[RMDB]
RNA sequence: GGGAACGACUCGAGUAGAGUCGAAAAACGAGGGUCGGUGCCAUGUUCGGCGGUGCCCGUCUUGGAUGCGAUCUGCACGCCGGGGAUUGCCCCUUUCUGCUGUGCGACUUUCUCGGCGCCGACCAUCUGUCCGAUGAACCUUCGGGUUCAUCGGACAAAAAGAAACAACAACAACAAC
Reactivity to 2A3 in 0.01 (KOAc 150mM, MgCl2 10mM, bicine 150mM(pH8.5), 24C), signal-to-noise 2, nucleotides 027 to 126: a010c140g000a040g020g000g000u000c000g020g030u010g050c020c000a040u050g060u060u000c020g010g000c000g050g100u100g030c040c000c000g000u000c040u080u110g060g060a060u060g000c020g040a200u070c000u140g000c020a010c040g020c030c000g000g000g000g020a100u070u240g050c010c000c000c100u030u140u120c000u070g000c050u110g070u030g040c020g040a030c000u140u080u000c110u070c090g000g000c000g000c000c000g000a000c000c000a000u030c000
This 177-nucleotide RNA was probed chemically with 2A3.
Values cover nucleotides 27 to 126.
2A3 adducts were read by reverse transcription with SuperScript II with manganese.
The 2A3 profile rests on 782 reads.
It was measured as part of the RMDB library OK1LIB.